[RMDB]
The record gives the reactivity of an RNA of 207 nucleotides to 2A3 and DMS. Reactivities are rounded to 0.1 and cut off at 0 and 3. It was measured as part of the RMDB library OK3TST. The 2A3 profile rests on 1,839 reads. For DMS the reverse transcriptase was MarathonRT. The RNA was probed in 150 mM KOAc, 10 mM MgCl2 and 150 mM bicine (pH 8.5) at 24 C. In probing experiments dimethyl sulfate is read out at A N1 and C N3, which are open when not base-paired.
RNA sequence: GGGAACGACUCGAGUAGAGUCGAAAAAUUAACCUCGUGUUUGGCUUGGAGCUGGCAGUGUUUGAUCACAAAAUCAAAAACGAACCUUGCCAUCACACAUACAAAAGUUUUAUGAUUGGUGAAUGUGAGUGAAGUGACUACUUUCUUUUCAUUAAGCGUUAACUACCUCUUUCGAGAGGUAGUUAACAAAAGAAACAACAACAACAAC
Reactivity to 2A3 in 0.01 (KOAc 150mM, MgCl2 10mM, bicine 150mM(pH8.5), 24C), signal-to-noise 4, nucleotides 027 to 156: a000u120u080a060a070c020c000u060c120g010u020g000u020u010u100g010g000c010u010u020g000g010a050g070c110u100g100g060c080a080g030u050g040u060u010u030g030a030u050c030a020c060a300a140a060a030u050c010a040a030a010a010a000c040g000a010a020c000c000u010u030g000c000c010a000u020c010a000c000a000c010a030u170a110c070a030a140a020a050g030u020u080u090u070a070u130g040a090u030u100g010g020u050g020a050a020u060g040u050g050a030g010u030g070a140a060g070u060g110a030c000u020a020c020u070u070u040c010u100u090u060u040c060a070u140u270a070a010g090c020
Reactivity to DMS in 0.01 (KOAc 150mM, MgCl2 10mM, bicine 150mM(pH8.5), 24C), signal-to-noise 1, nucleotides 027 to 156: a130u000u000a130a110c020c000u010c070g000u020g000u000u000u030g000g040c000u020u000g030g010a100g010c110u020g000g030c030a120g010u010g020u010u030u000g010a040u010c090a160c270a030a120a110a080u020c040a060a010a020a050a060c010g020a130a040c010c010u000u000g020c000c000a080u020c090a060c110a150c030a040u010a110c070a050a090a100a100g010u010u000u000u000a070u030g010a060u000u010g010g020u000g010a030a040u010g000u010g000a090g030u010g010a020a100g000u000g010a020c050u000a080c090u000u000u000c010u010u010u000u000c070a170u010u020a070a170g010c190